The record gives the reactivity of an RNA of 207 nucleotides to 2A3 and DMS. DMS (dimethyl sulfate) methylates the pairing face of unpaired adenines and cytosines. The RNA was probed in 150 mM KOAc, 10 mM MgCl2 and 150 mM bicine (pH 8.5) at 24 C.
[RMDB]
RNA sequence: GGGAACGACUCGAGUAGAGUCGAAAACAGGAGCUUAGCAUAGCUCCAUUCUACUAUGCAGCUAGUCGUCGUUUUCGACGUCUAGGAUAGACCACUACAGCAGGGUCAAUGAACUGCUGAUUACCGCGUCUCGUAGCGCGGGUUCUGGCUACGUACACCUAAUAGGACGGUUCGCCGUCCUAUUAGGAAAAGAAACAACAACAACAAC
Reactivity to 2A3 in 0.01 (KOAc 150mM, MgCl2 10mM, bicine 150mM(pH8.5), 24C), signal-to-noise 2, nucleotides 027 to 156: c020a050g000g000a000g000c020u070u090a020g080c150a120u060a120g000c000u000c010c010a020u000u030c000u030a120c010u010a030u140g030c020a020g050c020u000a000g010u040c030g000u000c030g050u080u030u020u300c040g000a010c000g000u000c000u000a000g010g000a010u080a040g060a010c000c010a070c090u170a160c010a020g020c000a020g000g030g030u030c070a050a140u110g010a040a020c000u000g000c000u000g030a090u020u150a080c010c030g010c000g040u030c040u020c090g120u190a040g000c000g000c040g010g000g000u010u050c050u010g050g000c010u000a000c020g050u020a030c050a040
Reactivity to DMS in 0.01 (KOAc 150mM, MgCl2 10mM, bicine 150mM(pH8.5), 24C), signal-to-noise 1, nucleotides 027 to 156: c080a160g030g010a070g020c000u010u030a140g070c050a040u000a030g000c000u010c060c210a030u000u000c050u000a010c040u000a030u010g010c060a190g020c000u000a060g020u000c030g060u000c030g010u000u000u010u000c040g020a030c000g050u000c000u000a030g000g010a180u010a080g010a140c070c000a030c000u000a130c000a020g000c090a010g020g010g020u000c090a140a130u030g020a050a070c020u000g020c020u000g020a200u010u010a070c010c010g040c020g030u010c050u000c220g020u010a130g000c010g030c010g010g020g010u000u000c060u000g030g020c030u060a060c060g040u000a140c090a160

Reactivities are given for positions 27 through 156. For 2A3, 1,386 sequencing reads were counted. The DMS profile rests on 2,877 reads.